RNA sequence: GGGAACGACUCGAGUAGAGUCGAAAAGCUGCGGGAUGGAUAUGAAGAUGAUCCCUAUCAUCGCAUAUUUGUACAGGGGAAAGACAGAUGAGGAUUUCAUGAUAGUAUCCCAAGAGCACGGAAUAAAAGGCUGACUUUUAUUCGUAAAAGUCAGCCUAAAAGAAACAACAACAACAAC
Reactivity to DMS in 0.01 (KOAc 150mM, MgCl2 10mM, bicine 150mM(pH8.5), 24C), signal-to-noise 1, nucleotides 027 to 126: g000c090u000g000c140g020g010g000a120u000g020g000a030u000a000u000g010a040a080g070a020u000g020a040u010c090c070c150u000a100u000c020a010u020c010g050c050a050u000a030u000u020u000g040u020a070c060a160g010g000g020g010a100a090a160g000a040c090a010g000a140u000g000a110g000g000a130u000u000u000c000a070u000g010a090u000a080g130u000a020u000c010c010c100a070a150g000a110g040c180a030c150g030g030a140a070u020a000a110a070